[RMDB]
Description:
This 177-nucleotide RNA was probed chemically with DMS and 2A3. For 2A3, 6,045 sequencing reads were counted. For 2A3 the reverse transcriptase was SuperScript II with manganese. It was measured as part of the RMDB library M2PK90. DMS adducts were read by reverse transcription with MarathonRT.
RNA sequence: GGGAACGACUCGAGUAGAGUCGAAAACACAUGCCAUCAUAUCGGUUAAGAACUCUUAACUCUGAUGGCUUUCGAGUUAUGUGGUGCAUUGAAGGUCUCCCUUCAAUUCAACGUACCGUUCCGUCAACAUCCCUAGGUCAUUCGUGACCUAGGGAUGAAAAGAAACAACAACAACAAC
Reactivity to DMS in 0.01 (KOAc 150mM, MgCl2 10mM, bicine 150mM(pH8.5), 24C), signal-to-noise 5, nucleotides 027 to 126: c130a120c150a090u000g010c000c000a000u000c000a040u010a140u000c290g020g000u000u000a000a000g000a230a180c300u020c010u000u000a000a010c000u010c100u000g000a010u000g000g000c000u000u000u000c020g010a030g020u000u000a040u010g020u000g010g010u010g010c080a010u000u000g010a010a000g000g000u000c210u000c210c010c000u000u000c010a020a020u010u000c060a040a040c060g010u000a020c060c020g000u000u000c000c010g000u010c090a050a160
Reactivity to 2A3 in 0.01 (KOAc 150mM, MgCl2 10mM, bicine 150mM(pH8.5), 24C), signal-to-noise 4, nucleotides 027 to 126: c080a000c020a060u180g000c040c000a010u010c010a010u070a080u300c070g000g000u010u000a020a020g060a270a200c070u020c010u300u010a000a010c000u000c030u090g010a000u010g000g000c000u010u020u010c010g000a000g000u080u050a050u130g080u090g060g130u040g020c010a010u000u010g010a010a000g000g080u110c110u200c090c000c000u000u000c000a010a000u000u040c020a050a030c010g030u030a030c000c030g000u010u000c010c010g160u130c060a050a050